[RMDB]
RNA sequence: GGGAACGACUCGAGUAGAGUCGAAAAAGGCGCAGAUCGUCAGUGGCGACAUGGUCGCUCAGCGCUUGGCACAAGACCCGAAUUCCGGGUACGCCGGCAUACUGGCCGACCGCGAUGCGCUGGACGAACUGACACCUUCUUUCGAGAAGGUGUCAGUAAAAGAAACAACAACAACAAC
Reactivity to 2A3 in 0.01 (KOAc 150mM, MgCl2 10mM, bicine 150mM(pH8.5), 24C), signal-to-noise 2, nucleotides 027 to 126: a000g090g000c060g000c000a020g040a230u030c010g060u090c040a150g110u060g180g030c010g020a040c050a100u130g020g020u010c000g010c000u010c010a010g000c010g010c100u290u300g010g000c020a030c020a060a150g020a080c040c000c000g010a090a220u300u050c080c000g000g000g000u030a020c010g010c030c000g060g000c030a030u080a150c000u030g010g010c000c000g000a010c000c030g010c010g030a040u060g010c000g000c000u000g020g020a020c020g010a070
Reactivity to DMS in 0.01 (KOAc 150mM, MgCl2 10mM, bicine 150mM(pH8.5), 24C), signal-to-noise 2, nucleotides 027 to 126: a060g000g000c080g000c100a020g020a090u000c010g010u000c030a130g020u000g010g020c030g010a030c090a100u000g040g020u000c000g010c060u000c010a000g010c070g020c000u000u030g060g020c000a140c160a170a140g020a120c000c000c000g050a130a190u010u010c160c020g020g000g000u000a030c140g000c000c000g000g000c020a050u020a050c090u010g000g000c300c010g040a030c010c010g010c090g030a160u000g010c000g010c000u000g000g000a070c050g010a060

An RNA of 177 nucleotides, treated with 2A3 and DMS and read out base by base. The reactions ran in a buffer of 150 mM KOAc, 10 mM MgCl2 and 150 mM bicine (pH 8.5), at 24 C. Values are in units of 0.01, from 0 to 300, in steps of 10. DMS adducts were read by reverse transcription with MarathonRT.